[RMDB]
RNA sequence: GGGAACGACUCGAGUAGAGUCGAAAAAAAAGAUAUGGACAUCGCCGUGACCAUCGAUCGGUGAGAGAACCUAGGUCGGAAACGACCUAGGACUCACCGGGAGGUCGGGGAUGUCCUAAGUCAAAAACCGAUACUCUAUGUUCGCAUAGAGUAUCGGAAAAGAAACAACAACAACAAC
Reactivity to 2A3 in 0.01 (KOAc 150mM, MgCl2 10mM, bicine 150mM(pH8.5), 24C), signal-to-noise 1, nucleotides 027 to 126: a010a000a010a040g040a010u090a070u170g000g000a000c000a030u010c060g140c300c070g250u270g110a060c030c000a130u300c050g110a130u070c010g020g000u010g000a030g020a010g030a030a030c010c000u000a000g010g000u010c010g000g000a100a100a000c000g010a010c000c010u010a000g010g020a000c020u000c000a000c000c000g000g000g010a010g000g010u000c000g030g000g010g020a000u020g000u030c000c000u020a000a010g010u040c020a000a000a060a100a210
Reactivity to DMS in 0.01 (KOAc 150mM, MgCl2 10mM, bicine 150mM(pH8.5), 24C), signal-to-noise 1, nucleotides 027 to 126: a040a050a110a070g020a030u020a300u010g000g020a000c000a010u000c020g010c020c020g010u010g010a010c000c000a140u000c140g000a090u000c030g000g020u000g010a030g020a200g000a190a000c010c000u000a000g020g040u020c000g000g000a140a110a100c000g000a000c000c000u000a000g000g030a000c000u010c000a010c030c000g000g010g000a000g010g040u000c000g010g000g010g010a010u010g000u000c000c000u000a010a060g030u000c020a030a110a050a220a210
An RNA of 177 nucleotides, treated with 2A3 and DMS and read out base by base. The RNA was probed in 150 mM KOAc, 10 mM MgCl2 and 150 mM bicine (pH 8.5) at 24 C. For 2A3, 1,985 sequencing reads were counted. It was measured as part of the RMDB library TTRDES.